[RMDB]
RNA sequence: GGGAACGACUCGAGUAGAGUCGAAAAAUGGGGUCGACUACGGAAGUGUGUCCCACUUUCGUCACCCUUUGGGUGGAAAAUUCUCUAUGUGUUAUAGUUUGUAUUUAAUAGUGUUUUCCCCUGGGGGACGCAGUCCGUAAUUCGUUACGGACUGCGUAAAAGAAACAACAACAACAAC
Reactivity to DMS in 0.01 (KOAc 150mM, MgCl2 10mM, bicine 150mM(pH8.5), 24C), signal-to-noise 3, nucleotides 027 to 126: a080u010g020g000g000g020u010c100g020a050c120u020a070c090g020g000a020a020g010u010g000u010g000u020c280c060c010a080c010u000u000u000c010g010u000c050a050c000c000c010u000u010u000g020g020g020u020g040g000a020a010a010a020u000u010c090u000c020u000a010u000g010u010g010u010u010a050u000a080g010u000u000u000g000u000a060u010u010u000a080a050u000a030g010u010g010u000u010u000u000c000c000c010c040u000g010g010g000g010g000
Structure probing data (DMS) for a 177-nucleotide construct. Reactivities are given for positions 27 through 126. Source: RMDB library OK2TRN, as collected in RNAgym.